Source: RMDB library OK2TST, as collected in RNAgym. The record gives the reactivity of an RNA of 177 nucleotides to DMS and 2A3. 2A3 is a SHAPE reagent: it acylates the 2'-hydroxyl of flexible nucleotides of all four kinds. Conditions: 150 mM KOAc, 10 mM MgCl2 and 150 mM bicine (pH 8.5), 24 C.

[RMDB]
RNA sequence: GGGAACGACUCGAGUAGAGUCGAAAAACGCCCUUCAACAUUCAUGUGCAAGGGAAAAUCAAGACACUGAUCCAGGGAACAACACGGCAACUGCUUGAGGCACACCUUAUCCACAUCAGCCCUGACGGCCACAACACAAUUUCGAUUGUGUUGUGGCAAAAGAAACAACAACAACAAC
Reactivity to DMS in 0.01 (KOAc 150mM, MgCl2 10mM, bicine 150mM(pH8.5), 24C), signal-to-noise 2, nucleotides 027 to 126: a140c300g000c020c020c000u010u010c060a100a070c020a110u000u000c210a100u000g000u000g000c140a100a040g000g010g000a050a030a090a090u010c080a080a060g000a070c100a040c040u000g000a040u010c060c050a100g000g000g010a080a030c120a080a040c050a090c030g030g020c030a060a070c140u000g000c040u000u020g020a070g000g000c010a070c160a060c090c000u000u000a100u000c010c020a070c070a020u000c040a050g000c010c000c020u020g000a150c190g000
Reactivity to 2A3 in 0.01 (KOAc 150mM, MgCl2 10mM, bicine 150mM(pH8.5), 24C), signal-to-noise 1, nucleotides 027 to 126: a000c070g050c020c070c000u090u040c050a120a110c010a140u070u270c050a070u170g010u040g100c100a010a020g080g010g000a060a020a020a100u090c030a000a040g150a080c030a010c160u070g040a050u000c030c020a000g010g000g070a060a010c010a030a000c020a050c060g000g060c010a060a080c060u000g030c000u070u050g040a020g050g040c030a000c000a000c030c000u010u040a020u020c000c000a010c000a090u030c000a010g030c030c000c000u050g000a040c020g060